[RMDB]
RNA sequence: GGGAACGACUCGAGUAGAGUCGAAAACAGACGUAUGGGCGUCGCCACCACCCAUGAAGGGGUGAUCGGACUGAUGAACAUGCCUGAAUUUGCUGAUAUCGACAUUGUAUUUGAUGCGACCAGCGCCACCACCGGGAUAGUUCGCUAUCCCGGUGGUAAAAGAAACAACAACAACAAC
Reactivity to DMS in 0.01 (KOAc 150mM, MgCl2 10mM, bicine 150mM(pH8.5), 24C), signal-to-noise 3, nucleotides 027 to 126: c040a030g000a100c180g030u000a000u000g010g000g000c000g030u000c000g000c010c000a050c110c010a010c010c000c000a140u010g030a160a170g020g000g030g020u000g010a010u010c160g010g000a130c060u010g010a020u000g000a030a020c010a020u010g000c010c020u000g000a110a110u010u010u000g000c010u010g020a060u020a090u000c010g010a180c010a020u010u000g000u010a130u010u020u010g000a030u000g020c000g010a010c150c020a000g000c020g010c040c030
Reactivity to 2A3 in 0.01 (KOAc 150mM, MgCl2 10mM, bicine 150mM(pH8.5), 24C), signal-to-noise 4, nucleotides 027 to 126: c020a020g070a080c070g050u030a010u030g030g020g040c000g010u010c000g000c000c000a010c020c000a000c010c000c010a030u150g200a150a070g090g000g000g010u010g000a040u070c120g000g020a040c110u270g010a030u000g000a000a000c020a010u020g000c000c030u080g030a160a150u070u060u170g000c010u010g010a050u030a030u230c060g140a170c080a020u010u050g220u290a250u160u250u300g030a010u010g020c000g020a010c050c000a010g000c000g030c030c020